[RMDB]
RNA sequence: GGGAACGACUCGAGUAGAGUCGAAAAGAUAUGGACGAUACCAUGGAGCUAAUCAUCGGAAACGAUGGAUAGCUAUGAAGUGGUGAUCGUCCUAAGUCAAACACACCAGGCUUCGGCCUGGUGUGAACAUACGACUACACUUCGGUGUAGUCGUAUGAAAAGAAACAACAACAACAAC
Reactivity to DMS in 0.01 (KOAc 150mM, MgCl2 10mM, bicine 150mM(pH8.5), 24C), signal-to-noise 4, nucleotides 027 to 126: g000a040u010a300u010g000g000a010c010g010a010u000a030c000c000a010u000g030g010a030g000c000u000a020a050u000c000a000u000c000g010g010a100a080a170c010g020a010u010g010g010a060u000a000g010c000u000a180u010g000a140a300g010u000g000g010u000g030a010u000c010g010u000c000c010u000a010a090g000u010c030a140a150a300c020a000c000a000c000c010a010g000g010c010u000u010c210g030g010c000c010u000g000g000u000g000u010g000a020a200
Reactivity to 2A3 in 0.01 (KOAc 150mM, MgCl2 10mM, bicine 150mM(pH8.5), 24C), signal-to-noise 4, nucleotides 027 to 126: g030a020u060a030u150g010g000a010c000g000a010u010a020c020c020a010u070g180g100a040g000c000u010a040a070u030c000a010u010c000g010g050a120a030a030c000g030a000u020g000g020a010u010a000g010c030u090a300u300g170a200a060g020u020g000g030u220g150a100u020c020g010u000c000c000u010a000a000g010u010c020a030a160a030c010a000c000a000c000c000a000g000g000c010u100u300c300g170g000c010c000u000g000g010u000g000u000g000a000a020
The record gives the reactivity of an RNA of 177 nucleotides to DMS and 2A3. It was measured as part of the RMDB library TTRDES. For 2A3 the reverse transcriptase was SuperScript II with manganese. Reactivities are given for positions 27 through 126. In probing experiments dimethyl sulfate is read out at A N1 and C N3, which are open when not base-paired.